[RMDB]
RNA sequence: GGGAACGACUCGAGUAGAGUCGAAAAGUAGUUGGUAGUCACUAACGACUAACGAAUGAGUCCCUGUUCUUUGUACACACCGCCCGUCGUUAUCUAAGAUGGAGGUGCGGGUGAAGAUGUGAGUGUGUCCGAAUCUACCUUUCGAGGUAGAUUCGGAAAAAGAAACAACAACAACAAC
Reactivity to 2A3 in 0.01 (KOAc 150mM, MgCl2 10mM, bicine 150mM(pH8.5), 24C), signal-to-noise 2, nucleotides 027 to 126: g060u100a020g000u000u000g070g060u020a010g060u170c010a010c300u270a220a060c060g000a000c000u000a000a040c000g060a040a300u150g000a000g150u020c000c000c000u000g020u000u000c040u090u000u000g050u060a100c030a000c000a050c010c000g050c000c000c000g030u090c210g000u090u050a300u160c010u120a300a110g170a090u300g050g000a000g000g000u100g000c000g000g050g000u000g000a000a100g200a050u300g070u150g090a090g000u000g000u000g090
Reactivity to DMS in 0.01 (KOAc 150mM, MgCl2 10mM, bicine 150mM(pH8.5), 24C), signal-to-noise 3, nucleotides 027 to 126: g050u020a120g000u000u000g040g000u000a020g010u010c180a170c210u070a080a080c170g000a030c000u000a040a040c040g010a100a110u000g030a190g000u000c010c000c020u020g010u000u020c000u000u010u020g010u070a180c000a020c000a020c000c020g000c040c000c020g020u010c070g000u000u000a070u010c050u020a100a190g000a060u020g000g020a100g010g000u020g000c000g010g030g010u010g000a070a080g010a150u000g000u020g010a100g000u000g030u010g020
The record gives the reactivity of an RNA of 177 nucleotides to 2A3 and DMS.
The RNA was probed in 150 mM KOAc, 10 mM MgCl2 and 150 mM bicine (pH 8.5) at 24 C.
The 2A3 profile rests on 316 reads.
Reactivities are given for positions 27 through 126.
Source: RMDB libraries RFM100 and RFMREP, as collected in RNAgym.